[RMDB]
RNA sequence: GGGAACGACUCGAGUAGAGUCGAAAAGAUAUGGAUUUCGCUUUUGACGAAGAGGGAUCGGAAACGAUCCUGGCUUCGAUAAGCGAAUCCUAAGUCAAACCCGUAUGAUGUUCGCAUCAUACGGGAACGUGUGUUACUGCUUCGGCAGUAACACACGAAAAGAAACAACAACAACAAC
Reactivity to DMS in 0.01 (KOAc 150mM, MgCl2 10mM, bicine 150mM(pH8.5), 24C), signal-to-noise 2, nucleotides 027 to 126: g030a020u000a300u000g000g000a040u000u010u050c010g010c000u000u040u000u000g030a220c100g000a010a000g010a300g000g000g000a000u000c000g000g000a100a150a100c000g000a000u000c000c000u000g000g000c030u000u000c000g000a040u000a000a010g040c000g000a010a000u000c000c000u010a010a100g030u010c020a090a130a080c000c000c000g000u000a000u000g000a000u000g000u010u030c240g020c000a000u000c000a010u000a010c000g010g000g000a000a010
Reactivity to 2A3 in 0.01 (KOAc 150mM, MgCl2 10mM, bicine 150mM(pH8.5), 24C), signal-to-noise 1, nucleotides 027 to 126: g010a020u050a050u150g000g000a020u170u280u130c000g000c000u090u070u120u190g250a160c020g010a000a020g000a030g000g000g000a000u020c000g030g030a120a020a060c040g000a000u010c030c000u010g060g140c010u040u020c000g070a060u000a040a010g000c000g010a020a000u000c000c000u000a050a020g040u000c050a080a010a130c040c000c010g040u020a000u020g000a000u000g040u090u110c300g000c090a000u000c000a000u010a020c000g000g000g010a020a010
The data come from the RNA Mapping Database (RMDB), library TTRDEL. The record gives the reactivity of an RNA of 177 nucleotides to DMS and 2A3. Reactivities are given for positions 27 through 126. For DMS the reverse transcriptase was MarathonRT. Conditions: 150 mM KOAc, 10 mM MgCl2 and 150 mM bicine (pH 8.5), 24 C.